RNA sequence: GGGAACGACUCGAGUAGAGUCGAAAAGCUAAGUCUGUAUGGAUAUGCUGAAACGCGACGAGAUGGGCUGAUAGAGACAUGAAGAGAACACGUGCAUAACUGGAAACAGUAGCUUGUAGGGCAUGCAAAAUGCCUCUCCAUUCGUGGAGAGGCAUUUAAAAGAAACAACAACAACAAC
Reactivity to 2A3 in 0.01 (KOAc 150mM, MgCl2 10mM, bicine 150mM(pH8.5), 24C), signal-to-noise 3, nucleotides 027 to 126: g010c020u080a030a080g020u030c050u070g220u150a100u220g030g000a040u030a010u140g000c010u020g000a060a060a000c080g000c020g070a030c020g000a020g000a050u100g020g030g000c030u020g000a030u040a120g140a010g020a030c010a070u140g040a090a050g070a000g000a110a030c050a000c110g040u060g000c040a040u030a220a020c000u010g010g000a050a020a000c000a010g020u010a030g020c010u010u050g070u070a040g000g050g000c020a000u030g040c020a010
Reactivity to DMS in 0.01 (KOAc 150mM, MgCl2 10mM, bicine 150mM(pH8.5), 24C), signal-to-noise 5, nucleotides 027 to 126: g000c010u010a070a140g000u000c020u010g020u010a040u050g020g000a080u010a180u040g000c010u000g000a090a090a070c150g020c030g020a040c070g000a060g000a060u000g000g000g020c010u000g000a110u030a040g010a100g000a060c100a060u020g000a080a070g000a090g030a090a090c110a050c070g010u010g020c050a040u030a040a030c040u000g000g000a080a070a120c020a030g010u010a090g000c070u010u010g020u010a070g000g010g000c050a040u020g000c110a030
Chemical mapping of a 177-nucleotide RNA with 2A3 and DMS. Values cover nucleotides 27 to 126. The RNA was probed in 150 mM KOAc, 10 mM MgCl2 and 150 mM bicine (pH 8.5) at 24 C. 2A3 adducts were read by reverse transcription with SuperScript II with manganese. For DMS the reverse transcriptase was MarathonRT.